[RMDB]
RNA sequence: GGGAACGACUCGAGUAGAGUCGAAAAGAGAUGGGCCCACCGUCCCACCCAAGGGUGCGGGUGGCUCAUCGGCAUCUGUUCGGUAUUGGUUGUUACCCGCCCACUCGCGUUCGGACGUCUUAGAAUCUAAGUGGUUGGAAUUCGUUCCAACCACUUAAAAAGAAACAACAACAACAAC
Reactivity to DMS in 0.01 (KOAc 150mM, MgCl2 10mM, bicine 150mM(pH8.5), 24C), signal-to-noise 2, nucleotides 027 to 126: g030a110g020a040u040g010g010g010c010c020c080a050c000c000g000u010c010c010c020a080c070c120c120a180a110g010g000g020u050g030c040g000g000g000u010g010g030c000u020c020a000u000c000g000g010c050a050u010c010u000g000u020u000c090g000g000u000a090u000u000g000g010u010u010g000u010u010a100c050c020c050g010c030c020c020a070c040u020c030g000c040g010u000u000c030g000g000a070c170g000u000c050u020u010a100g030a120a090u010c110
Reactivity to 2A3 in 0.01 (KOAc 150mM, MgCl2 10mM, bicine 150mM(pH8.5), 24C), signal-to-noise 2, nucleotides 027 to 126: g240a020g020a010u020g010g000g000c010c000c000a040c000c010g010u010c010c020c000a140c030c090c080a090a130g140g020g080u300g190c010g010g040g030u030g000g000c000u000c000a000u010c000g000g010c030a140u010c010u030g060u040u030c050g070g040u150a230u130u210g070g020u050u080g050u040u060a140c020c000c000g020c000c000c000a000c000u000c000g010c010g050u060u020c010g000g060a070c010g060u030c060u060u090a070g060a130a060u070c070

Overview:
Conditions: 150 mM KOAc, 10 mM MgCl2 and 150 mM bicine (pH 8.5), 24 C. An RNA of 177 nucleotides, treated with DMS and 2A3 and read out base by base. 2A3 adducts were read by reverse transcription with SuperScript II with manganese. For DMS the reverse transcriptase was MarathonRT. For 2A3, 1,035 sequencing reads were counted.